[RMDB]
RNA sequence: GGGAACGACUCGAGUAGAGUCGAAAAAAGGGGAACAACUUCGGUCUCAGCACUUUAAUUAUUCUUCUCGUUCCCACCUAAUUUCGCAAUUUAUUGUCCUUGACUUCUACCACGAGAAAAAAAUUAACUGGAAACAUGGGUUCGCCCAUGUUUCCAGAAAAGAAACAACAACAACAAC
Reactivity to 2A3 in 0.01 (KOAc 150mM, MgCl2 10mM, bicine 150mM(pH8.5), 24C), signal-to-noise 1, nucleotides 027 to 126: a010a000g070g000g000g000a080a080c000a000a060c040u080u040c140g000g100u000c010u010c070a000g000c130a020c000u200u000u160a230a090u150u020a130u050u020c020u050u000c020u020c000g000u000u000c030c000c030a080c000c000u100a050a110u000u140u150c110g000c050a000a050u130u160u000a180u300u000g020u000c000c000u000u080g000a030c000u070u040c000u020a070c000c000a110c070g000a010g050a040a000a000a000a000a000a120u170u050a130a000
Source information
Source: RMDB library RFM100, as collected in RNAgym. Chemical mapping of a 177-nucleotide RNA with 2A3. 2A3 adducts were read by reverse transcription with SuperScript II with manganese. The RNA was probed in 150 mM KOAc, 10 mM MgCl2 and 150 mM bicine (pH 8.5) at 24 C.